[RMDB]
RNA sequence: GGGAACGACUCGAGUAGAGUCGAAAAAAACUAGCUUGGCGACUACGCUUGGGUGCUAAAAUUAAAUACGCUAUGAUGCCGCAUUUAUUAAAAGAGCAUACUAACCCAUUAGAAUGCUUGUGGCCUUGGUGUGAUACUGUUUCGACAGUAUCACACCAAAAGAAACAACAACAACAAC
Reactivity to 2A3 in 0.01 (KOAc 150mM, MgCl2 10mM, bicine 150mM(pH8.5), 24C), signal-to-noise 2, nucleotides 027 to 126: a000a000a000c110u000a060g000c000u000u020g030g000c000g010a060c080u090a110c110g030c030u060u040g000g000g000u140g000c060u050a030a010a010a010u210u030a130a060a040u120a090c000g020c050u050a050u140g080a130u140g020c030c000g050c030a000u000u000u150a270u110u130a100a140a080a000g040a000g000c000a000u020a020c070u110a000a130c060c010c000a070u070u020a010g070a170a090u050g000c000u070u020g000u010g070g000c020c010u000u000
Description
The record gives the reactivity of an RNA of 177 nucleotides to 2A3. Conditions: 150 mM KOAc, 10 mM MgCl2 and 150 mM bicine (pH 8.5), 24 C. For 2A3, 728 sequencing reads were counted. Values cover nucleotides 27 to 126.